This 177-nucleotide RNA was probed chemically with DMS and 2A3. It was measured as part of the RMDB library TTRDEL. The reactions ran in a buffer of 150 mM KOAc, 10 mM MgCl2 and 150 mM bicine (pH 8.5), at 24 C.
RNA sequence: GGGAACGACUCGAGUAGAGUCGAAAAGAUAUGGAUGUGUGUUAUGGUAUGGGCAGCGUUGAAAUCGGAAACGAUGGAGCUGCCAUAACGUCACACAUCCUAAGUCAAACACGGGUUCGCCCGUGAAGACACUGGGGUAGUUCGCUACCCCAGUGUCAAAAGAAACAACAACAACAAC
Reactivity to DMS in 0.01 (KOAc 150mM, MgCl2 10mM, bicine 150mM(pH8.5), 24C), signal-to-noise 1, nucleotides 027 to 126: g020a030u000a300u020g000g000a000u000g030u000g000u000g000u000u030a040u000g000g000u000a020u000g000g010g020c010a010g000c000g000u000u010g000a080a070a010u000c020g020g000a120a090a170c020g000a010u000g000g000a140g010c000u000g030c000c000a000u000a000a040c000g000u000c010a030c010a010c020a000u010c000c040u000a010a080g000u000c010a160a110a270c020a000c000g040g000g000u000u000c220g030c010c000c000g010u010g000a090a130
Reactivity to 2A3 in 0.01 (KOAc 150mM, MgCl2 10mM, bicine 150mM(pH8.5), 24C), signal-to-noise 1, nucleotides 027 to 126: g040a040u100a040u140g010g000a010u020g040u000g000u000g040u190u300a060u090g110g030u080a040u090g130g300g170c030a020g000c000g160u210u000g000a050a030a010u030c010g070g000a060a000a060c000g000a000u010g000g020a030g000c030u000g030c000c000a000u000a000a010c000g050u050c000a000c000a000c000a000u000c000c000u010a040a000g010u020c010a060a040a110c000a000c010g010g060g020u030u070c300g080c050c000c000g000u000g010a000a020